[RMDB]
Structure probing data (2A3) for a 207-nucleotide construct. 2A3 is a SHAPE reagent: it acylates the 2'-hydroxyl of flexible nucleotides of all four kinds. Source: RMDB library M2RFPK, as collected in RNAgym. The reactions ran in a buffer of 150 mM KOAc, 10 mM MgCl2 and 150 mM bicine (pH 8.5), at 24 C. For 2A3 the reverse transcriptase was SuperScript II with manganese.

RNA sequence: GGGAACGACUCGAGUAGAGUCGAAAAAGUGGCAGGCCGUACGCGGCCUGCGACAUGCAAGAGAAGAAGCGUUCAACCAAGCCGUGACAGGCAAGUCAGGGCUUCGGCGGGAAAUUGCUCUUACCAAAAAACCUCCUUUCCUUCGGGAAAGGAGGAAGUCAAGAGGAAUGUUCGCAUUCCUCUUGACAAAAGAAACAACAACAACAAC
Reactivity to 2A3 in 0.01 (KOAc 150mM, MgCl2 10mM, bicine 150mM(pH8.5), 24C), signal-to-noise 1, nucleotides 027 to 156: a000g040u020g040g000c000a000g000g050c000c010g000u040a050c210g020c020g080g000c000c000u000g010c000g000a000c000a020u170g040c060a090a050g040a010g010a120a020g010a040a000g040c020g000u040u020c010a050a000c030c000a000a020g000c000c050g210u030g020a010c000a050g110g300c070a060a020g000u040c010a040g080g030g000c000u090u190c170g020g000c000g020g090g050a000a050a040u200u140g000c030u000c010u000u090a140c000c050a050a000a000a000a040a070c000c000u000c010c030u040u000u020c010c000u020u080c190g050g000g000a000a000a000g000g000a000g010g000a000a020